[RMDB]
Structure probing data (DMS and 2A3) for a 177-nucleotide construct. Conditions: 150 mM KOAc, 10 mM MgCl2 and 150 mM bicine (pH 8.5), 24 C. The 2A3 profile rests on 336,252 reads.

RNA sequence: GGGAACGACUCGAGUAGAGUCGAAAAGGAUGCAACGUAGUAAUAUGUGUGACAGCUACCUCUUGAGUCACACAUUACUAGUCGUAAUGCGAUGCAAGAGGUAGCUCGCGUUACGACAUCUGUAUCGCUACUACUGACUAUUCGUAGUUAGUAGUAGAAAAGAAACAACAACAACAAC
Reactivity to DMS in 0.01 (KOAc 150mM, MgCl2 10mM, bicine 150mM(pH8.5), 24C), signal-to-noise 9, nucleotides 027 to 126: g000g000a020u000g010c010a040a140c300g010u010a020g010u000a020a040u000a070u000g020u000g010u000g010a030c050a110g020c100u000a020c030c010u000c020u000u010g010a190g010u000c010a020c040a040c010a010u000u000a000c000u000a180g010u000c060g010u000a000a000u000g010c030g010a050u010g010c020a040a050g000a030g000g010u000a030g000c010u000c010g010c010g010u000u000a010c000g010a020c010a060u000c120u000g020u000a020u000c020g000
Reactivity to 2A3 in 0.01 (KOAc 150mM, MgCl2 10mM, bicine 150mM(pH8.5), 24C), signal-to-noise 9, nucleotides 027 to 126: g040g000a000u010g010c010a030a040c090g070u060a060g000u010a020a060u050a100u200g030u000g010u010g020a030c040a060g090c050u070a070c020c030u110c040u080u150g170a030g020u010c000a000c000a000c000a010u000u000a000c000u020a030g040u020c020g000u000a000a000u010g000c010g010a030u150g000c010a050a020g020a030g100g070u040a020g000c000u000c000g000c000g000u000u000a000c000g010a010c000a020u030c050u040g010u010a010u010c010g000